[RMDB]
An RNA of 207 nucleotides, treated with 2A3 and DMS and read out base by base. DMS adducts were read by reverse transcription with MarathonRT. For 2A3 the reverse transcriptase was SuperScript II with manganese. The RNA was probed in 150 mM KOAc, 10 mM MgCl2 and 150 mM bicine (pH 8.5) at 24 C.

RNA sequence: GGGAACGACUCGAGUAGAGUCGAAAAGUUUCACUCUUCACAUUUUGCUAGGUGACCUCUGAGCUUUAGCUACUGUCUGUUCUUUCAGUGAUGUCUCCCAAGUCUGUGACUUCAACCUUAGCAUCUCUUCAAGUUUCAGACUCGCUGUGUCUCCAGAUCAUAGGGUUACGUUCGCGUAACCCUAUGAAAAAGAAACAACAACAACAAC
Reactivity to 2A3 in 0.01 (KOAc 150mM, MgCl2 10mM, bicine 150mM(pH8.5), 24C), signal-to-noise 3, nucleotides 027 to 156: g010u010u050u070c040a060c050u070c040u120u070c040a090c060a180u100u180u100u150g040c020u070a040g030g010u020g030a050c010c030u010c040u050g030a020g020c020u080u120u110a040g000c020u070a040c030u110g050u040c020u020g000u040u020c000u030u090u040c030a050g010u040g050a050u050g020u010c020u050c040c000c010a020a010g000u000c050u100g080u080g020a040c010u050u020c100a130a120c000c040u040u100a060g000c040a100u020c040u020c010u100u090c060a070a030g020u040u040u000c010a020g000a030c020u010c050g060c010u030g030u010g030u010c010u010c060c000a010g080a080
Reactivity to DMS in 0.01 (KOAc 150mM, MgCl2 10mM, bicine 150mM(pH8.5), 24C), signal-to-noise 2, nucleotides 027 to 156: g020u010u010u000c020a110c050u000c020u000u000c040a060c020a110u000u010u020u000g010c090u000a070g020g050u000g000a070c050c030u000c020u000g010a060g000c010u000u010u000a100g030c030u010a050c020u010g000u000c020u000g000u000u010c020u000u010u000c050a080g040u010g010a070u000g030u000c050u010c010c030c020a110a100g010u000c030u010g000u000g000a050c030u000u010c040a050a100c040c040u000u000a080g000c050a070u000c040u010c030u010u040c050a050a120g020u000u000u010c000a080g010a050c010u000c050g030c030u010g020u010g000u000c010u010c000c010a040g010a300
Reactivities are given for positions 27 through 156.